Background:
The record gives the reactivity of an RNA of 177 nucleotides to DMS and 2A3.
[RMDB]
RNA sequence: GGGAACGACUCGAGUAGAGUCGAAAAGAGUCACCUUUUCAGCAAAAUGCAGUUAGGGUGCUAGGAUUUCUCGAAAAUGAAAUUGGUCGUAUUAUGCAAGUAGGGCUUGCUUUUGCGCUCCCCGACUGUAUAUACUGUAUUUCGAUACAGUAUAUACAAAAGAAACAACAACAACAAC
Reactivity to DMS in 0.01 (KOAc 150mM, MgCl2 10mM, bicine 150mM(pH8.5), 24C), signal-to-noise 9, nucleotides 027 to 126: g000a070g000u020c020a030c010c000u000u000u000u000c020a050g040c020a150a090a130a150u020g010c010a040g030u000u000a020g000g010g020u010g010c020u000a060g010g010a100u010u000u000c000u000c040g010a080a070a080a100u020g010a040a070a080u010u010g010g010u000c020g020u010a030u010u010a040u020g010c020a020a040g010u010a110g020g010g010c020u000u000g000c010u000u000u000u010g010c030g010c040u000c010c000c000c030g010a090c160u000
Reactivity to 2A3 in 0.01 (KOAc 150mM, MgCl2 10mM, bicine 150mM(pH8.5), 24C), signal-to-noise 9, nucleotides 027 to 126: g110a010g100u190c020a010c010c000u010u010u010u020c020a020g000c020a050a230a270a160u300g000c010a020g010u020u030a010g010g000g000u020g000c020u030a040g090g050a100u010u050u000c030u020c040g070a080a080a040a090u190g060a050a050a070u110u090g070g010u080c020g000u030a040u090u030a050u270g020c020a020a020g020u070a160g090g120g080c000u010u010g000c000u040u020u030u030g020c020g000c010u060c000c010c000c010g040a050c030u020

2A3 adducts were read by reverse transcription with SuperScript II with manganese.